[RMDB]
The record gives the reactivity of an RNA of 177 nucleotides to 2A3 and DMS. For 2A3, 3,234 sequencing reads were counted. It was measured as part of the RMDB library OK2TST.

RNA sequence: GGGAACGACUCGAGUAGAGUCGAAAAAUGGCUAAAAUGUACAUUGUACCAAUACUAACAUUUCCGUAAAACGUUCCGUUAGCGGAGAAGGUUUGCGCUAAGAUAGGUGGUGCUGAGGAAGGGAAACACUAUCGAGACAUUUCGAUGUCUCGAUAGUAAAAGAAACAACAACAACAAC
Reactivity to 2A3 in 0.01 (KOAc 150mM, MgCl2 10mM, bicine 150mM(pH8.5), 24C), signal-to-noise 2, nucleotides 027 to 126: a000u030g000g000c040u120a150a060a020a120u150g020u060a060c030a090u040u110g020u050a060c000c000a020a070u100a130c050u060a050a060c010a100u060u030u020c000c000g040u060a030a050a030a070c020g030u090u010c070c020g030u020u080a030g050c010g030g000a030g030a040a020g080g010u030u050u070g050c040g000c050u040a060a020g020a070u090a040g050g020u010g000g020u030g020c040u010g000a020g040g020a010a020g040g010g000a030a070a000c030
Reactivity to DMS in 0.01 (KOAc 150mM, MgCl2 10mM, bicine 150mM(pH8.5), 24C), signal-to-noise 4, nucleotides 027 to 126: a040u010g010g010c050u010a050a040a090a080u010g010u000a070c050a060u000u000g000u000a110c030c050a070a060u000a090c090u000a050a100c070a090u000u000u000c180c020g020u000a030a030a050a080c020g000u000u000c050c030g010u000u010a160g010c010g000g000a020g020a030a030g010g020u000u000u010g010c050g020c130u000a040a060g000a120u000a020g010g010u000g010g020u000g010c030u000g000a080g000g020a080a070g000g000g010a090a060a050c200